An RNA of 177 nucleotides, treated with 2A3 and DMS and read out base by base. The RNA was probed in 150 mM KOAc, 10 mM MgCl2 and 150 mM bicine (pH 8.5) at 24 C. As a SHAPE reagent, 2A3 marks flexible, mostly unpaired nucleotides at the ribose 2'-OH. For 2A3, 6,436 sequencing reads were counted. It was measured as part of the RMDB library OK2TST.

[RMDB]
RNA sequence: GGGAACGACUCGAGUAGAGUCGAAAACUGGCUUGCGCAGAUCAACUGGGUGGGGCUGAUCGGCGUGCUGGUCGCCGUCAUCGGUCUGCUGGCCAAUAUCUAUUUCCAGGUUCGCCGCGACCGCCGCAAUCCUUCCUAGUUUCGACUAGGAAGGAUUAAAAGAAACAACAACAACAAC
Reactivity to 2A3 in 0.01 (KOAc 150mM, MgCl2 10mM, bicine 150mM(pH8.5), 24C), signal-to-noise 3, nucleotides 027 to 126: c020u010g020g010c010u040u160g040c050g000c030a000g000a050u020c020a040a150c110u210g090g020g010u020g030g050g000g000c070u140g020a020u030c020g010g010c060g050u100g030c030u040g000g020u040c020g000c030c000g150u120c010a050u040c040g000g010u010c020u050g000c020u040g010g000c020c010a000a020u070a050u050c080u050a130u040u050u030c010c010a010g040g000u030u030c040g010c060c000g000c030g030a040c010c010g020c030c010g020c060
Reactivity to DMS in 0.01 (KOAc 150mM, MgCl2 10mM, bicine 150mM(pH8.5), 24C), signal-to-noise 5, nucleotides 027 to 126: c170u010g000g010c000u000u010g030c190g020c020a030g010a030u000c040a130a140c200u020g020g030g040u000g010g000g010g010c030u000g010a020u010c010g010g000c030g020u000g020c030u010g020g010u010c040g010c010c010g000u010c050a030u000c050g000g010u000c010u010g000c020u010g010g000c000c040a030a060u000a060u000c130u010a150u000u010u000c030c030a150g020g010u000u000c090g000c040c030g010c050g010a060c050c040g010c090c090g010c160